Chemical mapping of a 177-nucleotide RNA with 2A3. Reactivities are given for positions 27 through 126. For 2A3, 460 sequencing reads were counted. The reactions ran in a buffer of 150 mM KOAc, 10 mM MgCl2 and 150 mM bicine (pH 8.5), at 24 C.
[RMDB]
RNA sequence: GGGAACGACUCGAGUAGAGUCGAAAAGGCGAGCUGACCACGCGGCGCGACCAGCAACUGGAGUGGAACGCGCAGGGGCAGCUGACGCGGGUCAUCAGCGGCAACACGGAGACGCACUACGGCUACGGGCUCAUGCGUCGUUCGCGACGCAUGAGCCAAAAGAAACAACAACAACAAC
Reactivity to 2A3 in 0.01 (KOAc 150mM, MgCl2 10mM, bicine 150mM(pH8.5), 24C), signal-to-noise 1, nucleotides 027 to 126: g090g000c060g000a000g010c010u000g060a190c000c000a060c050g100c040g140g000c000g040c000g070a160c000c000a080g160c110a200a090c120u280g030g030a100g070u110g000g100a100a200c000g060c030g020c080a060g000g000g040g000c000a020g000c000u010g000a000c010g060c000g000g030g060u000c020a020u000c000a020g030c000g100g000c120a110a090c050a000c000g010g000a000g000a030c000g140c070a000c030u140a050c040g000g000c010u000a090c070g030